Source information: The record gives the reactivity of an RNA of 207 nucleotides to DMS and 2A3. The data come from the RNA Mapping Database (RMDB), library RNAMAK. The RNA was probed in 150 mM KOAc, 10 mM MgCl2 and 150 mM bicine (pH 8.5) at 24 C.
RNA sequence: GGGAACGACUCGAGUAGAGUCGAAAAGGGGUCAGCUUUUGACGUGACCUCUAAGUGAGCUUGGAUUUAUGGCUGAAGCCUCCACGGCCAUUGUCAGCUCACCGGGUCACGAUAAGCUGACGGAGGCACCCAAAAGGUACAACUUCGGUUGUACCAAGAUACAAAUUUUCUUCGGAAAAUUUGUAUCAAAAGAAACAACAACAACAAC
Reactivity to DMS in 0.01 (KOAc 150mM, MgCl2 10mM, bicine 150mM(pH8.5), 24C), signal-to-noise 2, nucleotides 027 to 156: g030g030g020g000u010c000a010g030c000u000u000u020u000g030a170c040g020u000g000a020c010c000u010c150u000a040a100g030u000g000a010g010c020u000u010g010g000a100u010u000u000a010u020g010g030c020u000g000a080a140g020c030c020u000c010c070a300c040g010g010c010c010a020u000u000g000u000c000a040g030c000u000c010a040c030c000g020g020g000u000c020a040c030g030a150u000a010a030g050c000u000g000a040c030g010g030a070g070g040c030a140c040c000c020a010a050a080a130g010g020u000a020c000a010a020c000u000u000c280g020g020u000u010g030u000a000c010c000a020a040
Reactivity to 2A3 in 0.01 (KOAc 150mM, MgCl2 10mM, bicine 150mM(pH8.5), 24C), signal-to-noise 6, nucleotides 027 to 156: g100g000g040g010u010c010a010g000c020u090u080u120u200g160a080c010g000u000g000a000c040c000u010c090u110a130a040g010u010g010a010g010c080u160u170g180g000a100u300u300u120a020u100g010g010c000u010g050a100a020g050c020c030u030c050c020a020c020g010g000c000c000a000u010u050g030u030c020a000g010c000u000c010a000c000c000g020g000g000u000c000a000c000g010a000u010a020a000g000c000u000g000a000c000g000g010a000g000g010c030a050c010c010c000a030a090a000a070g000g000u010a000c000a000a000c000u070u160c300g090g000u000u000g000u020a000c000c000a010a010